[RMDB]
RNA sequence: GGGAACGACUCGAGUAGAGUCGAAAACUCAGUCGGUUUGUUAGCCAGUAGAGUAGCAUCUAUUGAAUCAACCCUCUAUCAAAUUACCCAAGGAGUCAAGGAGUCUAUUAUGGCUAUGAACACCAAGCUUGAUAAGAUUGCCAACAUUUUACACUCAGCUUAACAUGAGAUUCGUCUCAUGUUAAGCAAAAGAAACAACAACAACAAC
Reactivity to DMS in 0.01 (KOAc 150mM, MgCl2 10mM, bicine 150mM(pH8.5), 24C), signal-to-noise 2, nucleotides 027 to 156: c040u000c060a100g000u000c080g000g000u000u000u000g000u000u000a080g040c070c000a060g040u000a060g000a050g030u010a200g030c110a260u000c010u000a100u000u010g020a100a130u000c050a100a070c020c000c010u000c030u000a080u020c060a040a100a050u000u000a090c020c010c010a100a180g000g000a080g020u010c020a050a080g000g020a110g030u010c060u000a100u000u010a110u010g100g000c020u000a160u000g000a070a150c100a120c030c010a020a170g020c030u000u000g000a100u010a080a090g010a050u000u000g010c000c020a040a050c090a150u000u000u010u010a160c040a140c100u000c050a300
Reactivity to 2A3 in 0.01 (KOAc 150mM, MgCl2 10mM, bicine 150mM(pH8.5), 24C), signal-to-noise 5, nucleotides 027 to 156: c050u040c010a020g050u030c030g060g030u020u070u120g080u090u080a040g050c040c010a010g020u040a000g000a010g010u050a010g020c030a030u000c010u060a110u040u070g070a070a080u070c030a020a070c010c020c010u020c020u060a100u090c050a040a090a210u140u070a100c020c010c040a040a040g090g020a060g020u030c030a020a050g030g000a030g030u000c010u030a110u070u050a080u210g000g000c010u030a080u170g040a080a030c060a050c100c000a050a010g020c010u010u030g020a020u040a110a050g030a070u070u100g070c020c000a070a030c030a110u090u150u090u140a060c090a030c040u110c030a010
Structure probing data (DMS and 2A3) for a 207-nucleotide construct. The reactions ran in a buffer of 150 mM KOAc, 10 mM MgCl2 and 150 mM bicine (pH 8.5), at 24 C. Source: RMDB library OK3TST, as collected in RNAgym. Values cover nucleotides 27 to 156. For DMS the reverse transcriptase was MarathonRT.